The record gives the reactivity of an RNA of 170 nucleotides to 2A3 and DMS. The RNA was probed in 150 mM KOAc, 10 mM MgCl2 and 150 mM bicine (pH 8.5) at 24 C.
RNA sequence: GGGAACGACUCGAGUAGAGUCGAAAAAACGGAGAAAGGAGCGGGCCUCCCGAUCCGAGUGGUCCACGGCGUAUCAAGUUUGGAGUCAUCCGGCCGAAGGGUUGAGAUGACCCACAGUCGGGUGAUCGAAGACCCACGUUCGCGUGGGUCAAAAGAAACAACAACAACAAC
Reactivity to 2A3 in 0.01 (KOAc 150mM, MgCl2 10mM, bicine 150mM(pH8.5), 24C), signal-to-noise 4, nucleotides 027 to 129: a000a000c060g020g000a010g050a020a050a000g010g010a000g010c060g040g220g000c030c010u010c000c000c000g000a000u000c010c010g000a050g040u130g000g030u020c010c000a020c040g140g000c020g030u120a050u150c060a060a130g040u080u070u070g070g000a070g000u000c000a000u000c000c000g010g000c000c010g050a150a090g060g000g010u020u040g060a120g000a140u300g070a010c010c000c000a000c010a010g010u010c000g000g000g020u010g020a040u000c010g060a060a000
Reactivity to DMS in 0.01 (KOAc 150mM, MgCl2 10mM, bicine 150mM(pH8.5), 24C), signal-to-noise 2, nucleotides 027 to 129: a050a070c070g010g020a030g000a110a190a100g000g000a000g050c140g000g020g050c130c020u010c000c000c000g000a000u050c070c040g040a000g040u080g020g030u030c000c000a080c000g030g010c050g010u080a120u040c090a040a050g010u010u080u000g010g020a150g000u030c010a000u050c020c000g040g000c030c010g030a200a140g030g000g000u010u010g010a200g040a070u030g000a040c010c040c010a070c000a100g000u010c030g030g030g040u040g040a050u020c030g010a000a000
The DMS profile rests on 10,729 reads. For 2A3 the reverse transcriptase was SuperScript II with manganese.